Source: RMDB library OK1LIB, as collected in RNAgym. An RNA of 177 nucleotides, treated with 2A3 and read out base by base. The reactions ran in a buffer of 150 mM KOAc, 10 mM MgCl2 and 150 mM bicine (pH 8.5), at 24 C. 2A3 adducts were read by reverse transcription with SuperScript II with manganese. For 2A3, 1,082 sequencing reads were counted.

RNA sequence: GGGAACGACUCGAGUAGAGUCGAAAACCCUCCCGCGGGAAGGCGUCCCACCGGGCCAGAUAAGUGUCGGCCACCAGCUCUUCCACGAAGGCAAAGGUGGCCGUUGGGCCAGAGACCGCGAGCACCUCCACUAGGCAUGGUUCGCCAUGCCUAGUGGAAAAGAAACAACAACAACAAC
Reactivity to 2A3 in 0.01 (KOAc 150mM, MgCl2 10mM, bicine 150mM(pH8.5), 24C), signal-to-noise 2, nucleotides 027 to 126: c010c010c010u030c020c000c000g020c030g010g040g010a040a030g020g000c040g070u050c010c000c000a010c030c100g050g000g000c040c000a080g020a080u150a090a100g120u080g070u210c040g000g000c010c010a000c000c000a000g050c040u100c040u240u000c020c060a120c300g000a010a000g020g000c010a200a000a070g000g000u000g000g000c000c000g000u000u000g000g010g000c000c000a020g040a000g000a050c020c030g000c000g000a000g020c010a070c010c010u000